The record gives the reactivity of an RNA of 207 nucleotides to 2A3. The RNA was probed in 150 mM KOAc, 10 mM MgCl2 and 150 mM bicine (pH 8.5) at 24 C. 2A3 adducts were read by reverse transcription with SuperScript II with manganese.

RNA sequence: GGGAACGACUCGAGUAGAGUCGAAAAACGGGGAGUACGCUCCGCGACAACACUUCUUUCGACCCGCUAACCGAGACCUAUGGGUCGUUAAAUUACGUCUCUAUCUUACUCACAUAACAUCGCACAAAAAACGUGGUUCGGUUCGCCGAACCACGAACGAACUAAUGGUCUUCGGACCAUUAGUUCGAAAAGAAACAACAACAACAAC
Reactivity to 2A3 in 0.01 (KOAc 150mM, MgCl2 10mM, bicine 150mM(pH8.5), 24C), signal-to-noise 3, nucleotides 027 to 156: a000c010g030g000g000g000a010g040u040a020c130g090c050u030c030c050g170c020g150a030c040a250a000c060a020c040u150u120c060u080u200u110c000g010a010c010c010c010g020c200u190a010a000c040c030g020a020g000a020c010c000u020a020u260g000g000g000u000c000g020u020u010a000a000a020u100u010a020c020g030u010c010u000c010u040a120u080c070u090u150a080c020u040c070a060c010a100u190a170a040c050a150u290c090g020c150a050c160a030a090a000a090a100a050c050g000u010g000g000u000u000c000g000g040u020u070c210g030c050c000g010a000a000c000c000a000c000g000a000a000